[RMDB]
RNA sequence: GGGAACGACUCGAGUAGAGUCGAAAAGGGGGCCAAUAACUCACAGAAAGAGGACAGUGCUGCAUUUUGUCUAUGUACCGAAACUCAGACUGGUGAGUUGUCUUAUUUAUUGACAUUGCGGUAGCUAUAGUAUAAGCCCUUUCGAGGGCUUAUACUAAAAAGAAACAACAACAACAAC
Reactivity to DMS in 0.01 (KOAc 150mM, MgCl2 10mM, bicine 150mM(pH8.5), 24C), signal-to-noise 4, nucleotides 027 to 126: g020g010g000g040g020c120c060a070a060u010a060a050c040u000c020a070c040a070g010a030a240a190g010a040g000g010a140c100a080g020u000g000c100u010g000c020a080u000u010u020u010g020u010c100u000a040u010g000u000a030c040c050g010a090a090a090c020u000c010a030g010a300c060u000g000g020u010g000a030g010u000u000g000u000c060u010u000a090u010u020u010a110u020u020g000a030c030a070u010u000g010c090g010g010u000a050g030c080u000a080
Reactivity to 2A3 in 0.01 (KOAc 150mM, MgCl2 10mM, bicine 150mM(pH8.5), 24C), signal-to-noise 1, nucleotides 027 to 126: g020g020g000g040g000c030c030a050a020u150a000a000c000u010c020a050c000a020g000a070a040a000g010a000g000g010a030c010a030g070u070g080c080u010g000c010a070u060u070u100u200g080u110c070u020a010u020g070u020a000c010c030g040a080a070a020c020u000c010a030g070a140c070u010g160g000u060g140a010g000u040u030g010u000c000u000u100a150u140u300u060a120u110u100g010a010c010a020u050u000g070c060g010g010u010a000g070c020u040a060